[RMDB]
RNA sequence: GGGAACGACUCGAGUAGAGUCGAAAAGAUAUGGAUCAUUCCCAACUGAUGGACCCAUCGGAAACGAUGGAGUCUUAAGUUGGGAGAUGAUCCUAAGUCAAAAGAUAAGCCCCUUCGGGGGCUUAUCGUACAAUGAUUUGUUCGCAAAUCAUUGUACAAAAGAAACAACAACAACAAC
Reactivity to DMS in 0.01 (KOAc 150mM, MgCl2 10mM, bicine 150mM(pH8.5), 24C), signal-to-noise 5, nucleotides 027 to 126: g000a050u000a300u010g010g000a010u000c010a010u000u000c000c010c000a000a010c010u010g000a140u010g000g010a020c010c000c000a000u000c010g010g000a170a120a240c000g020a010u000g010g000a110g020u000c000u000u000a130a030g000u000u000g000g000g010a010g000a010u000g000a000u010c000c000u010a020a090g020u010c040a130a080a150a230g000a010u000a000a010g010c010c000c000c010u000u010c230g030g020g010g010g010c010u000u000a000u000c000
Reactivity to 2A3 in 0.01 (KOAc 150mM, MgCl2 10mM, bicine 150mM(pH8.5), 24C), signal-to-noise 2, nucleotides 027 to 126: g040a020u090a030u180g000g000a010u000c000a000u010u030c000c000c000a000a010c010u080g070a110u300g020g010a000c020c000c010a000u000c000g000g100a100a030a080c010g000a010u010g000g030a040g010u000c000u000u030a000a010g010u000u020g030g010g010a030g010a010u010g000a000u000c000c000u000a060a010g010u010c030a020a020a140a180g010a000u010a000a010g000c000c020c020c060u030u150c230g070g000g000g000g000c000u000u000a010u000c000

Structure probing data (DMS and 2A3) for a 177-nucleotide construct. The 2A3 profile rests on 7,129 reads. 2A3 is a SHAPE reagent: it acylates the 2'-hydroxyl of flexible nucleotides of all four kinds. 2A3 adducts were read by reverse transcription with SuperScript II with manganese. It was measured as part of the RMDB library TTRDES. For DMS, 7,268 sequencing reads were counted.